[RMDB]
RNA sequence: GGGAACGACUCGAGUAGAGUCGAAAACGUUAGAUAUGCACAUGAAUACGUACAAAUUUAAUCGGUCAACUAUGUCUUAUCUUGCCGAAAAAUACGGACAGGAUUUAGUGACACAUUGUAGUGGGGCGUCGUGAUUCGGAUUCGUCCGAAUCACGACAAAAGAAACAACAACAACAAC
Reactivity to DMS in 0.01 (KOAc 150mM, MgCl2 10mM, bicine 150mM(pH8.5), 24C), signal-to-noise 1, nucleotides 027 to 126: c060g000u000u000a050g000a060u000a050u000g000c040a040c010a090u010g000a090a220u000a060c080g010u000a020c060a000a070a080u000u000u000a070a030u000c080g010g030u040c090a090a040c040u000a060u000g000u000c030u010u000a040u010c030u000u010g050c080c030g030a000a100a130a040a150u000a070c110g010g010a180c020a030g000g000a000u000u010u000a010g010u010g000a040c060a080c150a010u010u000g000u000a100g060u010g000g000g000g000c300
Reactivity to 2A3 in 0.01 (KOAc 150mM, MgCl2 10mM, bicine 150mM(pH8.5), 24C), signal-to-noise 2, nucleotides 027 to 126: c010g000u010u060a010g060a100u160a020u120g000c040a040c010a090u160g090a250a040u220a120c090g010u050a050c030a030a050a030u260u230u080a090a090u130c040g020g010u040c000a050a000c030u050a010u120g050u000c020u090u060a040u040c000u000u000g000c000c000g200a200a020a060a060a060u230a080c000g000g110a030c000a010g020g000a000u130u030u040a120g010u040g020a010c030a000c010a110u080u190g020u020a060g010u060g030g040g050g040c020